[RMDB]
RNA sequence: GGGAACGACUCGAGUAGAGUCGAAAAUCAUAUAUCAGUUUCGGUAUAGCAAUCAUCAAAGAUCGCAUUUGACAGUUAUGUCAAAGGGACACACCCUUCGCGCGUCCUGGGGCGUGCCAGUCGAUGACAACCGAAAAAUUUUCGAAUUUUUCGGUUGAAAAGAAACAACAACAACAAC
Reactivity to 2A3 in 0.01 (KOAc 150mM, MgCl2 10mM, bicine 150mM(pH8.5), 24C), signal-to-noise 5, nucleotides 027 to 126: u070c020a010u070a010u020a010u090c030a050g050u020u070u120c050g010g010u050a030u060a070g070c070a060a090u040c010a010u020c030a070a070a090g050a040u060c040g010c110a120u010u010u030g020a020c030a040g080u280u190a170u170g000u020c000a010a000a010g040g020g040a010c010a000c010a040c100c010c000u050u080c030g010c000g010c020g030u040c010c030u100g050g030g020g000c020g010u000g030c000c010a040g020u070c030g030a010u050g020a020
Reactivity to DMS in 0.01 (KOAc 150mM, MgCl2 10mM, bicine 150mM(pH8.5), 24C), signal-to-noise 6, nucleotides 027 to 126: u030c060a150u020a050u010a010u000c030a120g010u010u000u020c070g000g000u000a020u000a040g000c110a100a050u010c050a070u000c110a090a090a110g000a030u010c040g030c050a220u010u000u010g000a010c010a060g020u040u040a070u000g010u000c000a000a010a040g010g010g010a110c050a060c070a080c010c010c010u000u010c180g000c060g010c120g010u020c020c030u010g010g010g000g010c050g010u000g000c050c040a060g020u000c050g010a080u000g000a200
This 177-nucleotide RNA was probed chemically with 2A3 and DMS. Reactivities are given for positions 27 through 126. For DMS the reverse transcriptase was MarathonRT.